[RMDB]
RNA sequence: GGGAACGACUCGAGUAGAGUCGAAAACGGCAAGCGUUCGCGCUUGCCGAACAUAUCCGUACGCGGAUAUGAACGAUUGCGUGAGCAAUCGAAGCUGCUGCGUGAGCAGCAGCAAGUCGACACGUACGCGUGUCGACAACAACCAUGCGUGAGCAUGGUUGAGGACAUCUACGGAUGUCCAACGGUUACGGUGACGUAACCGAAGGAAGAGCGUGAGCUCUUCCAAGGGAAACGGGCAGGCGGCGGCGACCGCCGAAACAACCGCUAAUGGUGUGUUCGCACACCAUAAAAGAAACAACAACAACAAC
Reactivity to 2A3 in 0.01 (KOAc 150mM, MgCl2 10mM, bicine 150mM(pH8.5), 24C), signal-to-noise 3, nucleotides 027 to 266: c000g000g020c000a000a010g000c020g060u180u220c290g030c000g010c110u000u010g000c010c000g000a000a000c000a000u010a000u010c010c010g020u020a020c300g010c010g120g000a000u010a010u010g070a080a020c020g000a000u000u000g000c020g030u080g070a110g020c010a000a000u000c000g000a090a030g000c000u000g000c010u010g010c000g080u090g080a040g000c000a000g010c000a010g020c000a000a030g000u000c000g000a000c010a000c000g020u040a020c300g020c000g120u000g000u000c000g000a000c000a000a030c000a000a000c000c000a000u000g000c010g040u140g090a030g000c010a000u000g000g020u000u000g000a010g000g000a000c000a000u000c010u040a030c290g110g000a010u000g000u010c000c010a010a040c000g000g000u010u000a000c010g020g040u050g050a010c010g000u000a000a000c010c000g010a060a040g000g000a000a000g010a000g010c020g030u100g090a020g010c010u000c000u000u000c000c000a000a010g050g030g020a060a060a070c120g030g060g020c070a110g010g010c040g000g000c020g040g040c050g170a300c040c040g000c020c020g020a020a000a000c010a010a000c010c010g010c040u060a040
Reactivity to DMS in 0.01 (KOAc 150mM, MgCl2 10mM, bicine 150mM(pH8.5), 24C), signal-to-noise 1, nucleotides 027 to 266: c000g020g030c000a020a010g040c010g050u020u040c130g020c030g070c000u010u000g010c000c010g000a000a070c000a020u000a000u000c000c000g000u010a100c180g020c000g010g000a010u000a000u010g000a250a280c030g000a020u000u000g000c040g000u010g000a240g030c000a000a010u000c000g000a150a180g040c000u000g000c020u000g000c080g000u010g000a300g010c000a020g020c000a000g040c000a030a010g020u000c000g000a000c000a010c000g010u020a110c190g010c000g050u000g010u000c020g010a010c000a050a220c000a010a000c020c000a020u030g000c000g000u000g000a210g020c020a010u000g000g000u000u000g010a130g010g000a010c020a010u000c030u000a090c150g050g010a000u000g040u020c010c000a040a060c020g010g000u000u000a000c000g010g000u000g000a130c000g080u000a000a020c000c000g000a100a080g010g020a000a010g020a010g010c000g030u010g000a120g030c000u000c000u040u000c000c000a080a120g000g010g000a040a050a060c080g010g010g030c200a220g000g020c000g010g000c010g040g010c000g000a140c030c020g000c010c000g000a000a030a190c090a060a070c060c000g000c000u010a130